Record summary: Structure probing data (DMS) for a 177-nucleotide construct. The DMS profile rests on 1,143 reads. The RNA was probed in 150 mM KOAc, 10 mM MgCl2 and 150 mM bicine (pH 8.5) at 24 C.

[RMDB]
RNA sequence: GGGAACGACUCGAGUAGAGUCGAAAAUCAGCCAGUUCACCCCCGCGACCCGCAUGGCCUCCGACAACGGGGCGGCGGCCCGCGCGAGCCGCUGCGGACCCAACACAGCGAUCACGGCCACGGCGACUCAACACCGUUAUUUCGAUAACGGUGUUGAAAAAGAAACAACAACAACAAC
Reactivity to DMS in 0.01 (KOAc 150mM, MgCl2 10mM, bicine 150mM(pH8.5), 24C), signal-to-noise 2, nucleotides 027 to 126: u010c090a100g000c010c040a070g020u000u000c070a170c050c000c020c030c020g010c050g000a070c120c000c010g020c030a100u000g010g010c020c010u000c050c030g020a090c180a090a150c170g000g000g000g000c030g000g000c030g000g040c010c040c030g030c140g010c120g000a110g010c010c030g040c010u000g010c050g000g000a130c050c000c000a110a090c120a030c130a130g000c040g000a030u000c050a070c080g010g010c000c050a070c060g010g000c040g000a110c190